[RMDB]
RNA sequence: GGGAACGACUCGAGUAGAGUCGAAAAAUGGCGGCCGAUGACCAAACGUACGUCGGUUAGUUGUUACGAUUCGCCUUCCAGCUGAUACGCCGCACGUGGGACUCGGGACGUUGAUUUGGACGGGAUGAAUGCAUCUUACAUUCGUGUAAGGUGCAUUAAAAGAAACAACAACAACAAC
Reactivity to 2A3 in 0.01 (KOAc 150mM, MgCl2 10mM, bicine 150mM(pH8.5), 24C), signal-to-noise 9, nucleotides 027 to 126: a000u060g020g000c010g020g000c010c010g010a020u040g040a040c030c060a220a130a030c070g050u130a030c000g000u010c000g010g010u030u030a050g000u020u050g050u040u060a060c080g030a170u040u170c050g030c010c000u010u020c000c000a020g010c020u040g010a030u120a210c040g010c020c010g020c020a040c030g030u050g030g020g020a030c010u010c020g010g010g060a080c010g040u030u060g110a130u040u050u100g060g010a030c040g010g030g020a030u110g110
Reactivity to DMS in 0.01 (KOAc 150mM, MgCl2 10mM, bicine 150mM(pH8.5), 24C), signal-to-noise 9, nucleotides 027 to 126: a050u000g010g010c010g000g010c010c010g010a030u000g010a250c040c060a040a090a100c110g010u000a060c030g010u000c010g010g010u000u000a040g020u000u000g010u000u000a090c140g000a160u010u000c100g010c080c050u000u000c070c020a060g000c040u000g000a070u000a090c060g010c030c010g010c050a040c050g020u000g000g000g000a170c100u000c030g000g000g010a080c040g010u000u000g000a110u000u000u000g010g010a090c080g000g000g010a110u010g010
This 177-nucleotide RNA was probed chemically with 2A3 and DMS. 2A3 adducts were read by reverse transcription with SuperScript II with manganese. Source: RMDB library OK2TST, as collected in RNAgym. The 2A3 profile rests on 25,779 reads.